Chemical mapping of a 207-nucleotide RNA with DMS and 2A3. It was measured as part of the RMDB library RNAMAK. Reactivities are given for positions 27 through 156. For 2A3 the reverse transcriptase was SuperScript II with manganese. For DMS the reverse transcriptase was MarathonRT.
RNA sequence: GGGAACGACUCGAGUAGAGUCGAAAAGAAUCCGUUCGCGGAUUCAAAAAAGAUAUGGAAGGUGAACUACGGAAACGUAAGACUAUAAUCUCGGAAACGAGGUAGUCUUACAGUUUCCGCACCUUCCUAAGUCAAAAAAUGAGCGUUCGCGCUCAAAUGUUACAUUUAUGUUCGCAUAAAUGUAACAAAAAGAAACAACAACAACAAC
Reactivity to DMS in 0.01 (KOAc 150mM, MgCl2 10mM, bicine 150mM(pH8.5), 24C), signal-to-noise 2, nucleotides 027 to 156: g000a040a010u000c000c000g060u000u000c230g050c010g020g000a030u010u000c000a000a040a040a090a060a070g010a100u000a300u000g000g010a060a000g000g040u010g020a130a270c020u010a180c000g020g000a040a020a010c010g000u000a000a020g010a030c000u000a030u010a070a100u000c010u000c030g010g000a200a110a230c000g010a010g020g020u000a010g000u000c010u010u000a000c000a050g020u010u000u000c000c000g000c000a010c000c000u000u000c010c000u010a000a060g030u000c020a010a040a120a210a100a100u010g000a000g010c010g010u000u000c100g080c020g020c010u000c010a010a090a240
Reactivity to 2A3 in 0.01 (KOAc 150mM, MgCl2 10mM, bicine 150mM(pH8.5), 24C), signal-to-noise 7, nucleotides 027 to 156: g000a010a000u000c020c010g020u040u090c290g010c030g100g000a020u000u020c020a010a000a000a000a010a050g060a040u070a030u070g000g000a010a000g000g020u030g020a180a110c150u170a040c300g010g000a000a000a000c000g000u000a000a000g000a000c010u010a010u070a270a300u120c000u000c010g040g030a090a100a060c020g000a000g010g010u000a000g000u000c000u000u000a000c010a000g000u000u000u000c000c000g000c000a000c000c000u000u000c000c000u000a000a000g010u010c010a020a010a020a050a060a160u130g000a000g000c020g020u090u130c280g050c010g020c160u010c010a040a050a000